RNA sequence: GGGAACGACUCGAGUAGAGUCGAAAAAGCCUGGUACGCCAGGCAAAUGAAGGAUUACGGACCAGCUAAGGGAGGCAUUAGGAUCCUUAUUCUUGCCUCCCUUAGUUGGUCCCUAAUCCUUCGUUAAUAUAACUACUUGCUUCGGCAAGUAGUUAUAAAAAGAAACAACAACAACAAC
Reactivity to DMS in 0.01 (KOAc 150mM, MgCl2 10mM, bicine 150mM(pH8.5), 24C), signal-to-noise 5, nucleotides 027 to 126: a060g010c000c000u000g000g010u010a090c220g040c000c000a000g000g000c010a010a010a010u020g000a010a010g000g000a010u000u000a020c300g000g000a020c010c000a010g000c000u000a000a000g000g010g010a020g000g000c000a030u050u030a040g000g000a010u010c300c210u020u020a040u000u000c010u000u000g000c000c000u000c000c010c000u000u000a000g000u000u000g010g000u000c010c000c000u000a000a000u000c000c000u000u000c000g010u000u000a090a140
Conditions: 150 mM KOAc, 10 mM MgCl2 and 150 mM bicine (pH 8.5), 24 C. An RNA of 177 nucleotides, treated with DMS and read out base by base. It was measured as part of the RMDB libraries RFM100 and RFMREP.